[RMDB]
The data come from the RNA Mapping Database (RMDB), library RFMREP. Chemical mapping of a 177-nucleotide RNA with 2A3 and DMS. The 2A3 profile rests on 17,326 reads.

RNA sequence: GGGAACGACUCGAGUAGAGUCGAAAACUCCAGAGCCAUAAUUAGAGCAAACUAAUUGAAGUUGUGUUUUGACACACUUUCCAAAUUCACGGGUGCCGGAUGACAUAUUCACAACACUGCUGCUGCACAUCUUAUUGUUGUUCGCAACAAUAAGAUGAAAAGAAACAACAACAACAAC
Reactivity to 2A3 in 0.01 (KOAc 150mM, MgCl2 10mM, bicine 150mM(pH8.5), 24C), signal-to-noise 9, nucleotides 027 to 126: c020u000c010c010a030g020a020g080c030c010a080u060a150a040u070u040a030g010a040g130c060a090a060a060c020u040a020a050u060u090g050a070a030g030u120u090g010u030g030u020u070u080u300g120a010c010a000c000a000c040u020u040u000c030c020a060a090a170u110u100c050a030c080g040g020g010u030g020c020c020g040g030a040u060g020a020c010a040u140a060u100u070c040a030c010a090a030c030a030c050u050g010c010u030g010c030u040g000c040a020
Reactivity to DMS in 0.01 (KOAc 150mM, MgCl2 10mM, bicine 150mM(pH8.5), 24C), signal-to-noise 7, nucleotides 027 to 126: c060u010c010c030a110g010a120g000c050c050a110u000a030a030u010u000a020g010a150g020c130a100a080a150c050u010a030a050u000u000g000a050a070g010u000u010g030u000g010u000u000u010u010g000a060c050a020c030a030c040u000u000u000c060c090a050a060a090u000u000c090a060c120g000g000g020u000g010c040c030g000g020a090u010g010a060c090a040u000a060u010u000c060a050c070a030a050c080a060c080u000g010c030u000g010c020u010g010c090a180
The reactions ran in a buffer of 150 mM KOAc, 10 mM MgCl2 and 150 mM bicine (pH 8.5), at 24 C.